About this RNA
Structure probing data (2A3 and DMS) for a 177-nucleotide construct. The RNA was probed in 150 mM KOAc, 10 mM MgCl2 and 150 mM bicine (pH 8.5) at 24 C.
RNA sequence: GGGAACGACUCGAGUAGAGUCGAAAAUACGAUACCGAUAUUAUGUCUGGUAUUAACGUAGGUAUGGAUACGAUUCAUGUACAAACAGGUGUAUCUACGUUAGAAGAUGUGCAAAAUAAAAAUGUGCCGAGAAAUUGUACUUCGGUACAAUUUCUCGAAAAGAAACAACAACAACAAC
Reactivity to 2A3 in 0.01 (KOAc 150mM, MgCl2 10mM, bicine 150mM(pH8.5), 24C), signal-to-noise 4, nucleotides 027 to 126: u170a010c010g020a030u030a000c000c000g000a010u020a080u280u150a150u300g110u070c090u190g000g020u030a040u090u000a030a020c000g000u010a000g070g000u010a010u060g090g120a080u080a160c080g020a040u150u280c090a070u300g040u060a070c030a080a220a040c040a090g000g160u090g040u100a000u000c000u000a000c000g000u000u000a040g040a100a040g050a140u120g020u010g060c010a000a070a040a060u280a090a110a030a010a010u060g040u030g030c000
Reactivity to DMS in 0.01 (KOAc 150mM, MgCl2 10mM, bicine 150mM(pH8.5), 24C), signal-to-noise 2, nucleotides 027 to 126: u010a060c160g010a040u000a050c000c020g020a010u000a070u000u030a020u040g000u000c020u080g030g010u030a020u000u010a000a000c000g000u000a000g010g000u000a000u020g000g000a140u000a060c070g010a070u030u000c190a060u010g030u020a030c170a100a100a160c250a110g010g000u060g030u000a000u000c000u000a000c000g000u000u000a010g010a110a100g000a100u040g020u040g010c040a030a020a090a080u000a070a040a050a110a150u000g000u000g010c060
Background: 2A3 adducts were read by reverse transcription with SuperScript II with manganese. It was measured as part of the RMDB library OK1LIB. Reactivities are given for positions 27 through 126.